[RMDB]
RNA sequence: GGGAACGACUCGAGUAGAGUCGAAAACCCUCGAGACCUGCUGCUCUGGGCGGAAGAGUCUUCGACUCCUUCUUUGCCUAUUCAGCUUCGCGUCUCUGAGGCUCGGCGUAACGCGGCUCUUGCCACCAGGUUGCCUCCGCUAGUCGAGCGGACUUGGGUAUAACCCACCCUUCGGGGUGGGUUAUACAAAAGAAACAACAACAACAAC
Reactivity to 2A3 in 0.01 (KOAc 150mM, MgCl2 10mM, bicine 150mM(pH8.5), 24C), signal-to-noise 2, nucleotides 027 to 156: c000c000c000u000c020g000a000g000a000c010c020u020g010c000u000g010c000u000c000u010g010g000g020c010g010g010a010a000g010a000g000u020c030u150u130c220g020a000c000u080c000c030u030u010c000u130u220u300g010c010c000u010a010u100u170c000a000g000c000u010u010c010g000c080g010u000c000u000c070u090g020a010g030g010c000u030c020g010g000c030g030u080a070a030c060g010c010g020g000c000u010c030u050u150g060c050c010a090c020c030a060g040g000u160u090g060c010c010u050c020c000g020c000u010a010g020u010c010g020a000g010c000g010g010a030c020u030u040g060g000
Reactivity to DMS in 0.01 (KOAc 150mM, MgCl2 10mM, bicine 150mM(pH8.5), 24C), signal-to-noise 2, nucleotides 027 to 156: c120c000c010u010c030g000a070g050a040c000c010u000g050c030u000g020c000u000c030u000g040g000g030c010g050g000a030a030g030a050g010u000c000u000u000c210g010a050c010u000c060c060u030u000c010u000u020u020g020c020c010u010a040u010u000c030a040g000c030u000u000c110g040c180g030u000c020u000c020u020g000a150g030g040c080u000c040g000g020c020g020u010a020a080c090g040c120g050g030c020u000c060u000u000g030c060c060a220c090c070a180g020g040u000u010g000c000c030u010c000c000g050c020u000a120g000u000c090g020a070g010c040g040g000a130c060u000u000g020g000
This 207-nucleotide RNA was probed chemically with 2A3 and DMS.
The DMS profile rests on 3,314 reads.
The data come from the RNA Mapping Database (RMDB), library VIROID.
The RNA was probed in 150 mM KOAc, 10 mM MgCl2 and 150 mM bicine (pH 8.5) at 24 C.